[RMDB]
RNA sequence: GGGAACGACUCGAGUAGAGUCGAAAACUAUCAUCAGAGGCACUGGAGAUAUAUACUGCCUCCUCUUUAUACACUGGCUGGGGGCUCAGCAACUCAGGCAGCAAUAAAGAGGCUGCUGCUUUCCUUCAACACUUUAGGCAUCCGGAGAGGAAUGGGAAUUAAAUUUAGCCUUCGGGCUAAAUUUAAUAAAAGAAACAACAACAACAAC
Reactivity to 2A3 in 0.01 (KOAc 150mM, MgCl2 10mM, bicine 150mM(pH8.5), 24C), signal-to-noise 1, nucleotides 027 to 156: c010u050a100u230c040a020u020c040a030g000a050g050g050c040a060c080u050g020g030a050g010a020u030a000u020a020u020a180c040u050g010c010c010u000c000c020u040c000u000u040u000a030u000a030c070a020c070u020g130g000c000u010g020g020g020g000g030c050u030c080a080g150c020a040a140c020u010c010a010g090g000c010a010g000c020a000a000u010a020a030a000g000a000g020g000c000u040g010c000u030g030c050u100u030u050c030c000u080u000c020a070a030c030a080c070u160u170u160a060g010g000c010a060u110c050c060g090g000a060g020a030g090g120a060a010u140g040g010g090a020